The record gives the reactivity of an RNA of 207 nucleotides to 2A3 and DMS. For 2A3, 1,898 sequencing reads were counted. The RNA was probed in 150 mM KOAc, 10 mM MgCl2 and 150 mM bicine (pH 8.5) at 24 C. For 2A3 the reverse transcriptase was SuperScript II with manganese.

RNA sequence: GGGAACGACUCGAGUAGAGUCGAAAAGAAAGAGAAUUAGACACGGUUGAUCUCACCCUUCGGGGGGGCUAUAGAGAUCACUGGAAGCACUACCGGACAACCGGAACAUUGCAGCAAUGCAGCCCAAAAAAUCCAAACAUCUUCGGAUGUUUGGAAACAAUACCCUCUACUUCGGUAGAGGGUAUUGAAAAGAAACAACAACAACAAC
Reactivity to 2A3 in 0.01 (KOAc 150mM, MgCl2 10mM, bicine 150mM(pH8.5), 24C), signal-to-noise 2, nucleotides 027 to 156: g050a020a040a020g080a010g040a050a160u180u120a130g070a080c020a010c070g050g010u080u180g020a000u000c010u000c000a030c000c000c030u030u140c270g050g000g010g000g000g000g000c030u040a030u040a130g000a000g000a000u000c010a010c020u010g020g030a030a020g010c030a010c120u040a050c010c010g000g030a070c080a210a250c050c010g010g030a040a010c010a030u080u090g000c010a010g020c010a000a080u040g020c010a010g000c000c000c010a060a130a030a030a010a050u020c000c000a000a000a000c000a000u000c010u050u070c200g120g000a000u000g000u000u000u020g000g000a000a030a000
Reactivity to DMS in 0.01 (KOAc 150mM, MgCl2 10mM, bicine 150mM(pH8.5), 24C), signal-to-noise 1, nucleotides 027 to 156: g010a120a040a100g000a160g000a000a070u000u000a090g020a160c080a100c040g030g010u040u020g030a010u010c000u000c000a180c030c010c000u010u000c200g060g030g000g040g000g030g030c090u000a140u010a140g020a020g010a020u000c020a000c060u010g030g000a050a150g020c030a090c030u000a180c010c010g000g020a120c250a080a160c030c000g000g020a060a090c060a080u010u000g000c030a070g030c130a060a090u000g000c000a030g030c020c020c010a000a010a050a150a080a130u010c000c000a010a040a040c000a000u000c030u010u000c300g000g020a030u000g000u000u000u000g010g000a000a030a070